[RMDB]
RNA sequence: GGGAACGACUCGAGUAGAGUCGAAAAAAGGAUCACCCUAAGAUGAUCAUCUCGUGGCUAUUGAGAACGAAUGAAAUCAGAUGGUUCUAUUUCUCAAUCUUUCUGACUUGCUCCUACGAAACCAAGGGUUUCAGGCAGUUUUCGAACUGCCUGAAACAAAAGAAACAACAACAACAAC
Reactivity to DMS in 0.01 (KOAc 150mM, MgCl2 10mM, bicine 150mM(pH8.5), 24C), signal-to-noise 2, nucleotides 027 to 126: a030a000g000g000a020u030c040a040c020c030c060u060a050a030g000a140u000g000a070u000c000a060u000c110u020c070g010u050g010g000c030u030a100u020u000g000a090g000a100a020c160g010a000a010u050g010a020a080a040u030c060a070g000a070u080g010g020u000u000c010u000a070u010u000u000c000u030c010a140a090u030c060u010u000u010c030u000g000a090c050u000u060g000c120u020c000c030u000a060c090g030a050a090a030c070c030a090a110g000g010
Reactivity to 2A3 in 0.01 (KOAc 150mM, MgCl2 10mM, bicine 150mM(pH8.5), 24C), signal-to-noise 7, nucleotides 027 to 126: a010a000g090g010a090u060c050a050c030c010c020u020a050a060g040a080u080g000a080u050c000a010u010c020u020c080g050u020g150g050c060u130a180u120u280g090a170g010a070a010c030g020a040a040u060g010a080a080a060u090c050a040g070a160u080g060g030u030u020c030u070a120u030u060u000c010u000c000a080a140u010c020u060u110u010c030u050g070a100c030u020u040g010c010u050c030c020u060a110c060g060a100a040a030c050c020a060a070g130g010
An RNA of 177 nucleotides, treated with DMS and 2A3 and read out base by base. High DMS reactivity at an A or C suggests that its Watson-Crick edge is free. 2A3 adducts were read by reverse transcription with SuperScript II with manganese. The RNA was probed in 150 mM KOAc, 10 mM MgCl2 and 150 mM bicine (pH 8.5) at 24 C. For 2A3, 4,288 sequencing reads were counted. The data come from the RNA Mapping Database (RMDB), library OK1LIB.